[RMDB]
RNA sequence: GGGAACGACUCGAGUAGAGUCGAAAAACGAUGUAAAUGAGUCAAAUAGAGCAGAUUCAUACUUGCUUGGAACAGUUGACGACAAUUGUUUGGUGACCAACUCUUAUACUCUAAACAAUGUCGGUCACUUGACCAUGAAGUUCGCUUCAUGGUCAAGAAAAGAAACAACAACAACAAC
Reactivity to 2A3 in 0.01 (KOAc 150mM, MgCl2 10mM, bicine 150mM(pH8.5), 24C), signal-to-noise 2, nucleotides 027 to 126: a000c060g020a040u110g020u150a010a300a050u050g000a000g050u020c030a010a130a130u150a140g170a020g000c080a030g030a000u080u030c010a030u040a170c040u120u110g000c000u110u080g050g010a090a020c010a110g040u100u020g080a010c000g000a000c000a120a300u010u010g020u040u000u020g020g000u010g070a140c020c070a060a070c010u040c010u140u020a100u070a130c040u030c010u020a000a050a020c000a020a040u000g000u090c030g070g040u030c010a010
Reactivity to DMS in 0.01 (KOAc 150mM, MgCl2 10mM, bicine 150mM(pH8.5), 24C), signal-to-noise 2, nucleotides 027 to 126: a100c070g000a080u000g010u000a040a070a050u010g000a130g010u010c000a040a070a160u000a120g010a070g030c170a090g000a070u000u010c080a060u010a140c200u000u000g020c060u000u000g010g000a060a120c160a050g000u000u000g010a060c030g010a030c020a050a040u000u000g010u010u010u000g000g000u000g050a050c220c190a080a060c210u000c110u010u000a160u000a140c080u010c020u000a020a010a030c030a040a010u000g000u000c000g000g010u000c050a060